[RMDB]
An RNA of 170 nucleotides, treated with DMS and 2A3 and read out base by base. For DMS, 62,221 sequencing reads were counted. The reactions ran in a buffer of 150 mM KOAc, 10 mM MgCl2 and 150 mM bicine (pH 8.5), at 24 C. 2A3 adducts were read by reverse transcription with SuperScript II with manganese. The 2A3 profile rests on 58,720 reads. The data come from the RNA Mapping Database (RMDB), library 15KLIB.
RNA sequence: GGGAACGACUCGAGUAGAGUCGAAAACAGUCUAAACUUACAGAUCUUAAAUGCACAUCUGUGGUUCUCCUCUCUGUGCUCCAACAGUUACACUUAGAGGCUAAUAGUAGGGCCUGGGCUUUCUGUGAACCCUCAUGGUUCGCCAUGAGGAAAAGAAACAACAACAACAAC
Reactivity to DMS in 0.01 (KOAc 150mM, MgCl2 10mM, bicine 150mM(pH8.5), 24C), signal-to-noise 9, nucleotides 027 to 129: c110a050g000u060c040u050a060a060a060c080u020u050a040c030a050g030a020u000c070u000u070a080a110a130u040g020c170a060c200a020u020c020u000g040u000g000g060u000u000c050u030c000c070u030c000u000c010u000g020u020g020c100u010c050c050a040a040c120a080g010u010u010a100c070a030c070u040u050a050g000a030g040g000c120u040a050a060u040a080g010u030a040g020g000g040c010c010u010g020g020g000c050u000u000u000c020u040g030u030g030a080a060c130
Reactivity to 2A3 in 0.01 (KOAc 150mM, MgCl2 10mM, bicine 150mM(pH8.5), 24C), signal-to-noise 9, nucleotides 027 to 129: c020a000g040u050c050u170a080a060a060c030u120u200a030c080a010g030a050u030c040u110u250a150a210a160u270g050c100a060c020a100u010c020u020g010u020g040g000u040u020c040u010c020c000u000c000u000c010u010g030u030g050c030u040c070c020a080a070c010a080g040u110u120a020c020a010c030u030u070a020g010a010g070g000c010u060a090a080u070a190g140u050a050g030g040g000c000c010u020g010g010g000c020u050u120u010c030u020g060u020g060a060a060c000